[RMDB]
RNA sequence: GGGAACGACUCGAGUAGAGUCGAAAAGCUGCUUUAUGCGAUCCAACAACUGUAUACUGGGUUCCAGGGAAAGCAAAUCCUUGGCAGUACCAUGUUGGAAGAUGAAUUCACACCUGAGGAUGUUAAUGGAGGGUAGUGUUCGCACUACCCAAAAGAAACAACAACAACAAC
Reactivity to DMS in 0.01 (KOAc 150mM, MgCl2 10mM, bicine 150mM(pH8.5), 24C), signal-to-noise 3, nucleotides 027 to 129: g030c100u050g010c170u030u050u040a120u040g060c100g060a020u000c000c030a000a150c040a070a100c100u010g010u060a280u060a070c000u010g030g030g020u020u140c000c020a040g000g000g000a030a100a180g000c300a090a140a100u050c030c000u000u050g000g000c040a060g050u010a050c300c040a110u060g000u010u050g060g040a060a100g030a050u000g040a080a020u050u020c010a070c080a070c000c000u060g040a170g000g040a160u050g020u060u000a050a080u050g040g030a300
Reactivity to 2A3 in 0.01 (KOAc 150mM, MgCl2 10mM, bicine 150mM(pH8.5), 24C), signal-to-noise 3, nucleotides 027 to 129: g000c000u070g000c020u160u170u100a130u220g050c000g020a020u020c000c000a000a000c010a030a010c110u020g060u070a150u030a030c010u000g060g000g150u140u050c000c000a010g020g000g020a010a120a040g130c160a010a010a140u010c000c000u000u000g010g000c000a000g010u000a040c010c000a060u070g000u000u000g040g000a010a000g050a030u140g070a020a090u060u040c020a010c050a050c000c050u010g000a030g030g080a120u090g040u080u080a090a020u030g050g040a010